[RMDB]
RNA sequence: GGGAACGACUCGAGUAGAGUCGAAAAUGUGUCAGGAUGGGCCCAGUCUUAUGCCAGAAACAGAGAGGGCUAUGGGAAAGGAGCCCUGCAGCACGGCACCAGCUUGUCAGGUGCAGGAAAACAAGCGCGAAAGGCUGGCCUGGCACCCAGGCAUCAGCACUGGAGCUUCAUUCGUGAAGCUCCAGUGAAAAGAAACAACAACAACAAC
Reactivity to 2A3 in 0.01 (KOAc 150mM, MgCl2 10mM, bicine 150mM(pH8.5), 24C), signal-to-noise 2, nucleotides 027 to 156: u140g000u000g000u020c000a000g000g050a070u150g050g020g040c030c000c000a000g020u000c010u060u060a110u140g020c020c010a030g080a060a120a040c050a020g090a020g020a030g110g010g010c000u020a040u100g110g000g040a070a070a140g050g020a040g020c010c000c010u020g000c020a020g020c000a010c080g030g040c000a000c000c040a020g000c040u220u170g070u140c040a060g020g020u010g000c050a020g030g050a000a050a030a020c050a030a070g040c060g010c040g100a050a000a000g010g010c000u000g010g000c020c000u000g000g010c000a000c000c000c010a040g020g020c020a090u050c050a110g120